The record gives the reactivity of an RNA of 177 nucleotides to 2A3 and DMS. Conditions: 150 mM KOAc, 10 mM MgCl2 and 150 mM bicine (pH 8.5), 24 C. It was measured as part of the RMDB libraries RFM100 and RFMREP. For 2A3 the reverse transcriptase was SuperScript II with manganese.

[RMDB]
RNA sequence: GGGAACGACUCGAGUAGAGUCGAAAACGGGCCCUGGGCGCCAGGAGAGCUUCCCGGAGUCGACCUUCCUGCUGGCUGCUCUGUGACCGCUUCCCGGCUCUGCCCUCUUGGCCGAAGUGCCCGCUGCUAUUAAAACUGCAUUCGUGCAGUUUUAAUAAAAAGAAACAACAACAACAAC
Reactivity to 2A3 in 0.01 (KOAc 150mM, MgCl2 10mM, bicine 150mM(pH8.5), 24C), signal-to-noise 9, nucleotides 027 to 126: c010g000g010g000c030c010c000u070g070g090g030c130g000c010c000a000g010g020a030g010a010g010c030u080u030c020c010c000g020g010a010g010u030c030g020a170c010c030u070u080c010c000u050g050c020u030g040g010c020u020g010c010u040c030u050g080u070g050a080c010c020g010c020u040u030c010c010c000g000g010c010u030c040u050g010c010c000c000u010c010u010u030g010g000c020c010g050a080a010g010u020g020c010c000c010g000c040u060g020c020
Reactivity to DMS in 0.01 (KOAc 150mM, MgCl2 10mM, bicine 150mM(pH8.5), 24C), signal-to-noise 6, nucleotides 027 to 126: c040g010g000g010c010c050c040u000g010g010g010c170g010c000c000a020g000g010a030g000a100g010c040u000u000c030c020c020g010g000a040g020u000c020g010a110c070c040u010u010c040c020u000g010c060u010g010g010c020u010g000c030u000c040u000g010u010g020a100c070c050g000c060u000u010c020c030c010g010g010c040u010c060u010g000c020c010c010u000c020u000u010g000g010c000c010g010a120a040g010u000g000c010c000c010g020c060u010g010c140